[RMDB]
RNA sequence: GGGAACGACUCGAGUAGAGUCGAAAAAGUUCGCGCUUCCGUGAAACGCGAAAAUCGGACGGUGGCUGCAAGUCGCAUCGCAAAACCGUGGCAAGUGGAGUUAGCGAGAGGAGGCUGGGUUUUGGCUAGAACACACGGUACUUCGGUACCGUGUGAAUCAUACGAUACCCUUCGGGGUAUCGUAUGAAAAAGAAACAACAACAACAAC
Reactivity to DMS in 0.01 (KOAc 150mM, MgCl2 10mM, bicine 150mM(pH8.5), 24C), signal-to-noise 1, nucleotides 027 to 156: a090g010u010u000c000g030c020g000c030u010u010c060c240g120u000g010a040a020a010c010g030c000g020a000a010a010a100u010c030g030g000a150c020g030g020u000g030g030c050u000g010c020a090a060g040u000c010g060c020a150u000c010g000c030a060a050a060a110c000c050g030u010g000g020c040a020a100g000u060g000g030a100g000u000u010a120g000c050g000a130g010a070g000g010a070g050g000c010u000g000g040g010u000u000u000u000g030g000c070u000a150g020a100a150c010a020c000a000c000g020g010u000a010c000u000u020c260g050g090u010a010c010c000g010u000g030u000g000a010a080
Reactivity to 2A3 in 0.01 (KOAc 150mM, MgCl2 10mM, bicine 150mM(pH8.5), 24C), signal-to-noise 2, nucleotides 027 to 156: a000g030u020u020c010g000c000g010c000u110u010c030c120g160u120g120a140a010a000c020g010c010g100a090a000a000a030u080c010g020g020a020c050g060g010u010g010g020c000u020g050c050a080a020g050u050c060g010c100a040u040c080g050c070a020a090a060a020c080c010g020u030g090g000c090a080a050g070u080g030g050a150g020u090u040a000g020c020g000a030g000a020g090g020a000g010g020c050u060g070g010g010u040u030u070u040g030g000c000u030a010g020a230a000c000a010c000a000c020g000g000u000a000c000u000u070c140g060g000u000a000c000c000g000u000g000u000g000a000a000
Chemical mapping of a 207-nucleotide RNA with DMS and 2A3. The reactions ran in a buffer of 150 mM KOAc, 10 mM MgCl2 and 150 mM bicine (pH 8.5), at 24 C. It was measured as part of the RMDB library M2RFPK.